[RMDB]
RNA sequence: GGGAACGACUCGAGUAGAGUCGAAAAUGGCGGUCUUUGGCAUAUUGGUCCCUUAUCCGGCCAGAAGGGUGCCUGGCUUUGUCGCAUUUGGCAUGGGGGUGUCCCAUAGCGGGUGGGUGCAUUUUGGCGAUAAAUAAAUAUUCGUAUUUAUUUAUCGAAAAGAAACAACAACAACAAC
Reactivity to 2A3 in 0.01 (KOAc 150mM, MgCl2 10mM, bicine 150mM(pH8.5), 24C), signal-to-noise 9, nucleotides 027 to 126: u100g040g010c020g010g030u040c050u060u070u080g030g010c020a020u050a090u160u110g040g010u090c020c000c000u010u020a070u040c030c010g040g000c010c010a020g050a050a050g060g030g020u050g010c000c010u000g030g000c000u080u070u080g040u040c030g000c070a100u050u050u170g040g000c040a040u030g010g000g000g010g030u060g040u050c020c000c000a020u050a020g020c050g000g010g030u120g030g020g010u040g030c050a100u030u080u060u190g080g040
Reactivity to DMS in 0.01 (KOAc 150mM, MgCl2 10mM, bicine 150mM(pH8.5), 24C), signal-to-noise 8, nucleotides 027 to 126: u020g000g010c040g000g010u010c030u010u010u020g010g010c050a070u020a100u010u010g000g010u010c020c030c030u020u030a070u020c100c140g010g010c020c020a060g010a070a090g010g000g010u010g000c030c020u000g000g000c040u010u010u020g010u020c080g010c070a080u010u020u010g000g010c050a060u020g010g000g000g010g010u020g010u020c010c010c020a060u010a060g010c050g000g000g010u030g000g000g000u010g010c080a100u010u010u010u020g010g020
This 177-nucleotide RNA was probed chemically with 2A3 and DMS. The RNA was probed in 150 mM KOAc, 10 mM MgCl2 and 150 mM bicine (pH 8.5) at 24 C. For 2A3 the reverse transcriptase was SuperScript II with manganese. The 2A3 profile rests on 16,132 reads. The data come from the RNA Mapping Database (RMDB), library OK1LIB.